Overview:
Conditions: 150 mM KOAc, 10 mM MgCl2 and 150 mM bicine (pH 8.5), 24 C. This 177-nucleotide RNA was probed chemically with 2A3 and DMS. For 2A3, 5,819 sequencing reads were counted. For DMS the reverse transcriptase was MarathonRT. Values cover nucleotides 27 to 126. 2A3 adducts were read by reverse transcription with SuperScript II with manganese.

[RMDB]
RNA sequence: GGGAACGACUCGAGUAGAGUCGAAAAGCGGCAUCGUCCAUGCUUGCAAUAUAAUCCGGGUGCACCAUGGAAGCGCGCCCGUUGAACCAUUCCACCUUGCCUGAAACAAUAACGGUUUCGCCUUCCAACUGGUGACUAAUUUCGAUUAGUCACCAGUAAAAGAAACAACAACAACAAC
Reactivity to 2A3 in 0.01 (KOAc 150mM, MgCl2 10mM, bicine 150mM(pH8.5), 24C), signal-to-noise 4, nucleotides 027 to 126: g020c010g020g010c000a030u050c070g120u000c050c030a010u040g030c000u110u220g040c020a110a030u100a040u050a180a100u000c030c030g000g030g000u000g000c030a020c050c020a160u130g070g060a090a040g020c020g000c000g000c010c000c000g000u010u070g010a020a020c030c000a070u070u040c020c010a050c010c020u040u100g020c000c000u070g050a080a050a010c040a070a130u160a150a030c060g030g000u030u030u030c020g000c010c010u040u000c000c000a030
Reactivity to DMS in 0.01 (KOAc 150mM, MgCl2 10mM, bicine 150mM(pH8.5), 24C), signal-to-noise 4, nucleotides 027 to 126: g030c050g020g010c020a050u000c110g000u010c110c080a110u000g000c020u000u000g040c060a100a070u000a100u000a080a150u000c080c010g000g000g020u000g010c040a040c160c060a140u000g010g000a090a090g010c120g000c020g010c300c010c000g020u000u010g020a060a090c100c060a110u000u000c020c050a060c050c070u000u010g000c010c060u010g000a060a080a060c140a070a120u010a080a110c110g010g000u000u000u000c020g000c070c020u000u000c030c040a140